An RNA of 207 nucleotides, treated with DMS and 2A3 and read out base by base. The reactions ran in a buffer of 150 mM KOAc, 10 mM MgCl2 and 150 mM bicine (pH 8.5), at 24 C. Reactivities are given for positions 27 through 156. For 2A3, 3,114 sequencing reads were counted.
RNA sequence: GGGAACGACUCGAGUAGAGUCGAAAAGCUAGUCGGAGACGACUAGCAACGAUCAGUUCGCUGAUCGGAAGGUGCAUUCAAAUACGCUAGAAGCACCAAUAUGCGACGCAUAGCGUAAAACUGAGAAAGCAGAUAACAAAAAUAAAAAGGCGUCGUGCUAUCGAUUUACGUUCGCGUAAAUCGAUAGAAAAGAAACAACAACAACAAC
Reactivity to DMS in 0.01 (KOAc 150mM, MgCl2 10mM, bicine 150mM(pH8.5), 24C), signal-to-noise 2, nucleotides 027 to 156: g060c000u010a000g000u000c010g010g010a300g000a240c000g000a040c000u000a000g000c000a030a000c020g040a010u000c000a000g000u000u020c280g060c000u000g010a020u000c000g000g020a050a040g010g010u000g010c010a210u020u000c030a030a100a190u010a040c000g000c000u000a130g010a090a200g030c000a020c010c020a080a090u000a050u000g020c020g030a020c020g030c020a180u000a050g030c000g000u000a040a040a150a190c010u060g020a180g000a120a040a100g020c080a100g040a160u020a060a250c080a020a020a090a070a140u000a000a100a070a040a150g020g010c000g010u000c000g020u000g000
Reactivity to 2A3 in 0.01 (KOAc 150mM, MgCl2 10mM, bicine 150mM(pH8.5), 24C), signal-to-noise 4, nucleotides 027 to 156: g000c000u010a000g010u000c000g020g000a030g030a090c010g000a000c000u000a000g000c000a000a020c010g010a000u000c000a000g030u050u060c130g020c080u010g000a000u000c010g020g030a080a060g010g010u020g020c130a300u000u040c020a020a040a060u040a010c010g000c020u020a000g000a030a000g000c000a000c020c000a010a030u210a080u110g010c010g000a000c010g000c020a050u050a050g000c000g010u020a040a030a090a080c020u060g010a020g140a230a110a030g110c030a010g050a050u190a110a100c110a060a100a040a030a010u180a080a080a020a010a010g070g000c010g000u000c000g000u000g030